RNA sequence: GGGAACGACUCGAGUAGAGUCGAAAAGGGUGGGGCCCCAGCAGAUGUCUGGAUUUGGUAGCCAGGGCCUGGAGCCGGAUGCUGAGAACGAGGCCUGCAACUCAUUUCCCCAUUAAACAUUCUGAGACUCUUGUAUUCUUUUCGAAGAAUACAAGAGAAAAGAAACAACAACAACAAC
Reactivity to 2A3 in 0.01 (KOAc 150mM, MgCl2 10mM, bicine 150mM(pH8.5), 24C), signal-to-noise 8, nucleotides 027 to 126: g010g000g000u040g010g010g000g010c000c010c000c000a010g010c010a010g080a260u170g080u070c020u030g010g060a090u090u100u120g080g020u060a030g040c020c020a030g040g040g020c010c020u050g080g020a020g020c010c010g010g000a010u050g000c020u020g020a030g040a230a060c090g010a080g010g010c000c000u110g090c040a060a050c000u010c020a020u030u020u010c000c000c000c020a030u190u250a050a060a040c040a060u060u010c030u050g050a060g060a120
Reactivity to DMS in 0.01 (KOAc 150mM, MgCl2 10mM, bicine 150mM(pH8.5), 24C), signal-to-noise 4, nucleotides 027 to 126: g000g020g010u000g000g010g000g000c010c000c020c040a080g000c020a080g000a050u020g020u040c010u000g010g000a110u000u000u010g010g030u020a090g000c010c030a060g000g010g010c050c010u000g000g000a080g010c000c000g000g010a050u000g000c020u000g010a120g010a110a130c150g000a090g010g020c000c010u020g000c080a060a060c010u030c010a090u010u010u000c010c000c020c290a120u070u030a070a070a130c180a090u010u000c040u010g010a170g010a300
This 177-nucleotide RNA was probed chemically with 2A3 and DMS. Reactivities are given for positions 27 through 126. The RNA was probed in 150 mM KOAc, 10 mM MgCl2 and 150 mM bicine (pH 8.5) at 24 C. As a SHAPE reagent, 2A3 marks flexible, mostly unpaired nucleotides at the ribose 2'-OH.